[RMDB]
RNA sequence: GGGAACGACUCGAGUAGAGUCGAAAAUUGCCUAUAGGGACCAAUAACAUUGGCCAUAUGCCAAUCCAAUAUGGCGGACUUGGCACAGUGCCAAGACCCCACCCCAAACUUGGCGCGGUGCCAAGUCUCACGGAUAUUCCUUCGGGAAUAUCCGUGAAAAAGAAACAACAACAACAAC
Reactivity to 2A3 in 0.01 (KOAc 150mM, MgCl2 10mM, bicine 150mM(pH8.5), 24C), signal-to-noise 6, nucleotides 027 to 126: u060u040g090c020c010u060a050u090a110g060g000g080a200c030c010a050a040u100a100a060c080a080u050u080g030g010c010c020a050u030a020u110g040c020c010a030a060u090c050c010a070a030u090a120u230g050g020c030g010g000a000c000u000u020g000g000c000a000c000a020g030u020g020c000c000a000a140g110a300c010c010c000c020a120c010c010c000c010a030a050a020c010u010u000g010g000c010g000c030g030g020u020g000c010c000a000a000g000u010c000
Reactivity to DMS in 0.01 (KOAc 150mM, MgCl2 10mM, bicine 150mM(pH8.5), 24C), signal-to-noise 3, nucleotides 027 to 126: u070u020g010c010c000u000a010u020a080g020g030g010a060c030c020a040a050u010a090a090c060a300u020u010g000g000c000c030a050u010a030u010g000c110c000a020a130u030c180c070a100a090u040a080u030g000g000c000g010g030a020c010u000u000g000g010c010a010c000a050g000u000g010c000c020a000a000g000a140c060c060c010c100a220c020c020c020c020a050a040a070c010u000u000g000g010c000g030c000g000g000u000g000c000c000a000a000g000u010c000

An RNA of 177 nucleotides, treated with 2A3 and DMS and read out base by base. The reactions ran in a buffer of 150 mM KOAc, 10 mM MgCl2 and 150 mM bicine (pH 8.5), at 24 C.